[RMDB]
RNA sequence: GGGAACGACUCGAGUAGAGUCGAAAAAUUAACCCAGCCUAAAUGAAGAGCAGGACAAAAGGUUCGUCUGCAAACACUCCAUGGUAGACAGAGGAUGGGGAAAUGGAUCUGGACUAUUUGGAAGUAAGUAAGACUGAGAGUUCGCUCUCAGUCUUACAAAAGAAACAACAACAACAAC
Reactivity to 2A3 in 0.01 (KOAc 150mM, MgCl2 10mM, bicine 150mM(pH8.5), 24C), signal-to-noise 1, nucleotides 027 to 126: a000u090u050a040a090c020c000c000a010g040c010c000u160a150a130a070u170g100a110a100g030a020g140c040a030g040g050a040c000a080a190a000a040g090g000u130u070c020g000u010c050u000g000c020a000a090a000c040a010c090u000c010c010a010u040g030g000u010a000g030a020c010a030g020a000g060g010a050u080g000g000g000g040a000a070a000u080g070g000a030u000c000u000g010g000a000c040u060a050u110u050u070g050g000a000a130g030u110a120a010
Reactivity to DMS in 0.01 (KOAc 150mM, MgCl2 10mM, bicine 150mM(pH8.5), 24C), signal-to-noise 1, nucleotides 027 to 126: a080u020u030a060a130c020c000c010a110g000c020c040u000a050a100a090u000g010a100a090g010a130g010c060a030g030g040a060c080a110a080a100a110g010g000u010u010c040g010u000c010u010g000c030a130a070a110c110a010c080u010c050c030a060u020g000g000u000a050g000a060c090a020g000a010g000g010a100u010g000g020g010g020a040a060a040u010g000g030a050u010c030u030g000g000a130c060u000a010u000u000u000g020g000a100a040g000u010a040a140